RNA sequence: GGGAACGACUCGAGUAGAGUCGAAAAGAUAUGGAAAGCGCGGAUGGGAGAUGUGGCUCGGAAACGAGCCAUACAUCGAAGAACAUCACGCGCUUUCCUAAGUCAAACUUCUACUUCGGUAGAAGAACAUUGUAUGGUACUUCGGUACCAUACAAUGAAAAGAAACAACAACAACAAC
Reactivity to 2A3 in 0.01 (KOAc 150mM, MgCl2 10mM, bicine 150mM(pH8.5), 24C), signal-to-noise 3, nucleotides 027 to 126: g000a010u060a030u100g010g000a020a010a010g020c020g000c010g030g000a020u010g030g030g020a100g010a020u000g000u020g020g010c000u000c000g000g100a040a020a010c000g000a000g000c020c000a010u040a010c020a000u000c020g090a220a040g030a010a020c010a010u020c060a050c150g000c000g000c000u000u000u000c000c000u010a010a000g000u000c010a010a040a100c000u010u010c000u010a010c000u020u080c300g150g000u010a020g000a010a010g000a020a030
Reactivity to DMS in 0.01 (KOAc 150mM, MgCl2 10mM, bicine 150mM(pH8.5), 24C), signal-to-noise 5, nucleotides 027 to 126: g010a030u000a300u010g000g000a010a010a000g020c010g040c000g010g000a010u000g000g000g010a110g010a010u000g020u000g010g000c000u000c000g010g000a110a080a230c010g020a010g010c000c000a030u010a050c050a010u000c000g010a120a170g000a140a170c010a020u000c010a120c000g010c000g010c000u000u000u000c000c000u000a020a090g010u000c040a120a110a220c000u000u000c010u000a010c000u000u010c220g020g010u000a010g000a010a000g010a120a300
Chemical mapping of a 177-nucleotide RNA with 2A3 and DMS.